[RMDB]
RNA sequence: GGGAACGACUCGAGUAGAGUCGAAAACCUUUUGGACUUUUCUCUAGGUUUGGCGCUAAACUCUUCUUGUGAGCUCACUCCACCCCUUCUUCCUCCCUUUAACUUAUCCAUUCACUUAAAACAUUACACACUGCCACUGGUUCGCCAGUGGCAGUGUAAAAGAAACAACAACAACAAC
Reactivity to 2A3 in 0.01 (KOAc 150mM, MgCl2 10mM, bicine 150mM(pH8.5), 24C), signal-to-noise 1, nucleotides 027 to 126: c010c080u010u130u060u000g110g100a070c040u000u000u020u000c100u000c000u000a070g020g000u010u020u020g070g000c000g040c030u020a070a070a000c000u000c000u000u170c000u140u280g060u040g100a010g000c010u030c000a110c000u000c000c040a000c000c000c000c020u000u030c000u120u000c000c000u100c030c000c000u100u150u080a060a060c030u000u050a000u090c000c030a130u120u250c070a080c070u040u120a040a000a160a000c090a070u200u180a150c040
An RNA of 177 nucleotides, treated with 2A3 and read out base by base.
Values cover nucleotides 27 to 126.
Source: RMDB library RFM100, as collected in RNAgym.
High 2A3 reactivity points to a flexible backbone, as in loops and unpaired stretches.
2A3 adducts were read by reverse transcription with SuperScript II with manganese.